[RMDB]
RNA sequence: GGGAACGACUCGAGUAGAGUCGAAAAGGUAUCUAAUCUGCAUGAGUAAAUAACCAGCUCUAAGGAGGAUGUGAUAUACCACCCAGUGUGAGGACUGCUGGGUAUGGCAGUGGUUCUUACACUGAAUCAUGCGCUGGAGUCACUUGGAGGCUUAUUAAUUUAUGCCAUUAUUCGUAAUGGCAUAAAUAAAAGAAACAACAACAACAAC
Reactivity to 2A3 in 0.01 (KOAc 150mM, MgCl2 10mM, bicine 150mM(pH8.5), 24C), signal-to-noise 4, nucleotides 027 to 156: g020g010u040a020u060c050u110a110a040u020c020u050g040c020a060u070g020a040g090u140a040a090a160u120a080a090c050c020a030g020c010u010c050u070a050a120g100g010a020g020g000a060u050g050u070g090a040u040a010u020a160c000c020a020c000c020c000a000g000u000g000u000g000a000g000g010a000c000u010g000c010u000g000g090g150u190a170u160g100g010c010a000g000u010g010g000u010u000c000u000u000a000c000a000c010u000g000a010a040u080c020a030u060g010c030g000c060u020g040g030a030g060u030c010a040c130u030u060g030g030a020g050g020c030u100u100a050u100u130a250
Reactivity to DMS in 0.01 (KOAc 150mM, MgCl2 10mM, bicine 150mM(pH8.5), 24C), signal-to-noise 3, nucleotides 027 to 156: g040g030u000a010u020c040u000a120a080u000c020u010g020c040a130u000g000a090g010u000a060a070a100u010a100a150c030c030a110g000c030u000c030u020a090a140g030g020a100g020g020a060u020g010u000g010a110u000a100u010a070c030c010a120c040c020c000a050g000u000g020u000g000a050g010g010a000c020u000g010c010u000g020g020g040u000a030u000g030g000c020a040g030u000g010g000u000u000c030u000u000a030c020a020c020u010g000a030a070u010c040a050u000g010c030g010c020u000g000g000a140g020u000c040a050c070u000u000g000g010a160g000g010c060u010u020a050u000u000a080
The data come from the RNA Mapping Database (RMDB), library OK3TST. An RNA of 207 nucleotides, treated with 2A3 and DMS and read out base by base. The reactions ran in a buffer of 150 mM KOAc, 10 mM MgCl2 and 150 mM bicine (pH 8.5), at 24 C.